[RMDB]
RNA sequence: GGGAACGACUCGAGUAGAGUCGAAAAGACCUUCAGUUCGCUGAAGGUCGAUGAUGGUAAGAGAGAUUACCAUCUGUUAAGUGUUAUGGAUAAGAUCUCUCAGUGAACGUGCUUUCGAGCACGUUAAGAUAGCAUAGUUGUUCGCAACUAUGCUAUCAAAAGAAACAACAACAACAAC
Reactivity to 2A3 in 0.01 (KOAc 150mM, MgCl2 10mM, bicine 150mM(pH8.5), 24C), signal-to-noise 9, nucleotides 027 to 126: g000a000c000c000u000u000c000a030g020u010u120c170g020c110u000g010a000a010g000g010u000c000g000a000u020g010a000u000g020g030u050a130a020g000a000g000a000g000a020u010u020a010c000c010a000u000c020u030g100u080u150a200a150g120u070g130u300u270a150u210g130g070a100u050a140a080g030a070u000c000u000c000u000c030a010g070u060g200a030a000c000g000u000g000c000u080u080u150c270g050a010g000c000a000c000g000u000u000a000a000
Reactivity to DMS in 0.01 (KOAc 150mM, MgCl2 10mM, bicine 150mM(pH8.5), 24C), signal-to-noise 8, nucleotides 027 to 126: g000a010c000c000u000u000c000a000g010u010u010c220g040c000u000g010a020a010g010g010u000c000g000a030u010g010a040u000g000g000u000a040a150g000a030g000a020g000a030u000u000a030c010c010a010u000c000u000g010u000u000a080a110g010u010g010u010u000a100u010g000g010a130u000a060a080g000a040u000c000u000c010u000c000a260g010u010g010a020a010c000g020u000g010c000u000u000u010c200g010a020g010c000a000c000g010u000u000a030a080
Structure probing data (2A3 and DMS) for a 177-nucleotide construct. For 2A3, 15,056 sequencing reads were counted. For DMS the reverse transcriptase was MarathonRT.